[RMDB]
RNA sequence: GGGAACGACUCGAGUAGAGUCGAAAACUGCCAGCUAUAGCUAUUGGCUCACUCAUUCUCUUUGGAACAGCUCAGCACUCUUGUGCUAAUGCAAUUGCUUGAACUGAUGUACAAUUGUGUAGAGUCCUGCAGGAAAGCAUAAAACUGCUGAAGGCUGCCUCACAUGUGAGUUCGCUCACAUGUGAGGAAAAGAAACAACAACAACAAC
Reactivity to 2A3 in 0.01 (KOAc 150mM, MgCl2 10mM, bicine 150mM(pH8.5), 24C), signal-to-noise 2, nucleotides 027 to 156: c050u060g080c050c000a050g000c020u080a090u180a190g000c050u000a040u220u160g030g000c020u040c070a070c000u130c010a060u200u010c040u040c000u040u070u140g090g020a120a030c020a030g090c000u010c000a000g030c000a000c000u040c050u100u080g000u000g000c010u070a060a050u020g000c030a020a050u060u140g010c020u040u100g050a120a060c070u050g070a060u080g110u150a020c050a110a150u180u100g030u090g040u060a030g010a020g170u040c040c000u010g040c000a020g000g100a190a110a020g050c000a000u010a020a090a030a020c000u020g020c000u020g020a040a050g100g000c000u030g050